[RMDB]
RNA sequence: GGGAACGACUCGAGUAGAGUCGAAAAGAUAUGGACCCAACUAGACAUGAUGGUCUUCGGAAACGAAGACUCAUCAACAGCUAGCUGGGUCCUAAGUCAAAUCCUAGACUCUUCGGAGUCUAGGAAACCUACGAUUAGACUUCGGUCUAAUCGUAGGAAAAGAAACAACAACAACAAC
Reactivity to DMS in 0.01 (KOAc 150mM, MgCl2 10mM, bicine 150mM(pH8.5), 24C), signal-to-noise 2, nucleotides 027 to 126: g010a000u010a040u000g020g000a000c000c010c000a000a020c010u000a000g000a090c210a100u010g030a040u000g000g010u010c000u000u000c010g000g010a010a010a040c000g000a030a020g010a020c000u010c020a000u000c000a100a100c230a190g000c000u000a000g010c020u000g000g010g010u000c010c000u010a000a060g000u000c010a110a160a210u000c000c000u000a000g000a020c000u000c000u000u020c200g040g000a040g000u000c000u000a000g010g000a020a030a020
Reactivity to 2A3 in 0.01 (KOAc 150mM, MgCl2 10mM, bicine 150mM(pH8.5), 24C), signal-to-noise 1, nucleotides 027 to 126: g000a010u020a010u040g000g010a000c040c000c000a000a020c000u020a000g020a060c170a300u260g010a000u000g000g000u000c000u010u020c010g020g000a000a000a000c010g000a000a010g010a000c020u040c040a000u000c000a080a170c130a060g000c000u000a000g010c000u000g020g000g000u000c000c000u000a000a000g000u000c010a030a000a120u000c010c000u000a000g000a000c000u040c020u090u110c300g220g000a000g000u000c000u000a000g010g000a010a050a010